[RMDB]
RNA sequence: GGGAACGACUCGAGUAGAGUCGAAAAGAAGUGCGAAUGAAUUCAUGCACAAGCUCGUUCUACACCGGAGAAGGCCUGUAGUUCGAGCGAUUAGUCUUGACGAGUCUAAGCUGACGUCUUGACGAGAGGGAACGUGCACCUUCGGGUGUACGUUCCCAAAAGAAACAACAACAACAAC
Reactivity to DMS in 0.01 (KOAc 150mM, MgCl2 10mM, bicine 150mM(pH8.5), 24C), signal-to-noise 2, nucleotides 027 to 126: g000a030a170g000u020g010c020g010a100a130u040g000a080a180u070u010c170a070u000g000c040a000c040a180a110g040c030u000c000g020u000u000c020u000a020c000a060c120c030g010g030a220g000a170a260g010g040c260c180u010g000u000a000g000u000u010c030g010a000g000c000g000a070u040u000a040g000u000c000u040u000g040a000c000g000a080g000u000c150u060a150a130g050c130u000g020a140c030g020u000c000u030u000g000a010c000g020a070g000a240
Reactivity to 2A3 in 0.01 (KOAc 150mM, MgCl2 10mM, bicine 150mM(pH8.5), 24C), signal-to-noise 3, nucleotides 027 to 126: g070a190a010g010u000g010c030g000a120a090u120g030a110a140u250u060c040a030u170g000c000a010c010a030a010g000c000u010c000g010u000u010c000u010a000c000a020c000c080g150g140a220g050a300a060g100g040c090c080u040g020u000a000g000u000u000c000g000a000g000c000g000a000u000u050a000g000u000c010u030u000g000a010c060g040a040g050u050c050u110a070a050g060c090u070g100a010c010g020u000c000u000u010g020a010c020g010a020g020a010